[RMDB]
RNA sequence: GGGAACGACUCGAGUAGAGUCGAAAAGACGAGUCCUUCGUCGAGAAUAUCCUGAAGGAGUUCACCGGAGUGGAGACGGACCUUCGAGAGCGGAUCUCGAGGGUUCUUCGCAGCUACGGUAUAACGGUCAUAGCCUCACAUUCGUGUGAGGCUAUGAAAAAGAAACAACAACAACAAC
Reactivity to DMS in 0.01 (KOAc 150mM, MgCl2 10mM, bicine 150mM(pH8.5), 24C), signal-to-noise 7, nucleotides 027 to 126: g000a020c020g000a060g020u010c160c090u000u000c010g010u000c040g010a090g020a160a140u010a070u000c010c010u000g010a130a080g000g000a090g010u000u000c300a090c020c010g000g000a000g010u000g010g060a300g010a020c040g000g000a000c000c000u000u000c000g000a000g000a040g000c300g010g000a190u010c000u000c010g000a020g000g000g010u000u000c000u000u000c000g010c300a300g000c000u000a010c000g000g010u010a060u000a060a050c070g000g000
Reactivity to 2A3 in 0.01 (KOAc 150mM, MgCl2 10mM, bicine 150mM(pH8.5), 24C), signal-to-noise 2, nucleotides 027 to 126: g010a010c020g010a000g150u240c040c070u120u030c070g010u000c060g000a010g030a050a150u210a120u110c010c010u040g020a090a040g070g100a140g040u110u110c080a020c010c000g000g000a000g010u090g000g190a050g030a040c030g000g000a000c000c010u010u000c010g000a000g000a000g020c300g000g240a130u000c000u000c010g000a000g000g000g000u000u000c010u010u000c000g020c040a000g010c000u020a020c000g000g020u040a040u050a000a010c010g010g000
An RNA of 177 nucleotides, treated with DMS and 2A3 and read out base by base. 2A3 adducts were read by reverse transcription with SuperScript II with manganese. The RNA was probed in 150 mM KOAc, 10 mM MgCl2 and 150 mM bicine (pH 8.5) at 24 C.